[RMDB]
RNA sequence: GGGAACGACUCGAGUAGAGUCGAAAAGGAAUCGACAGUAGAGUGUAUCAUGUCAGUAAGCAUGCCGGGGAAUGGUGGUUUACCCCGUUAUCAAAUGAUUACCGAUCAAUAAUUGGCGAAACUCGUUAGGCCCGUCCACACUUCGGUGUGGACGGAACAGACUCCCUAUAUUCGUAUAGGGAGUCUGAAAAGAAACAACAACAACAAC
Reactivity to 2A3 in 0.01 (KOAc 150mM, MgCl2 10mM, bicine 150mM(pH8.5), 24C), signal-to-noise 5, nucleotides 027 to 156: g050g010a040a060u070c040g020a020c040a030g060u100a040g020a020g050u070g030u050a070u130c040a040u070g050u060c030a030g070u110a080a010g010c030a030u030g050c030c010g000g000g000g010a030a020u060g040g000u010g020g050u020u020u090a070c000c000c000c000g010u030u040a050u050c020a020a040a060u070g020a020u040u030a050c040c040g030a020u060c040a050a030u110a170a070u090u060g030g000c040g040a070a040a060c060u050c050g040u040u030a060g040g030c020c000c000g000u000c000c000a010c010a000c000u020u050c170g060g010u000g000u010g000g010a000c000g000g000a000a000
Reactivity to DMS in 0.01 (KOAc 150mM, MgCl2 10mM, bicine 150mM(pH8.5), 24C), signal-to-noise 2, nucleotides 027 to 156: g020g020a140a060u000c020g020a070c040a050g000u010a090g020a080g010u000g020u000a060u010c030a200u000g010u000c050a080g000u010a050a080g010c010a040u000g010c160c020g000g010g020g050a040a120u010g010g020u000g040g010u000u010u000a280c030c020c000c010g020u000u000a070u000c280a070a050a100u000g000a090u000u000a020c020c010g000a040u000c130a070a070u010a060a120u000u010g020g000c050g000a150a110a080c070u000c030g000u000u000a090g030g020c100c010c010g000u000c000c000a030c000a020c000u000u010c270g030g020u000g020u020g000g010a000c010g000g010a000a060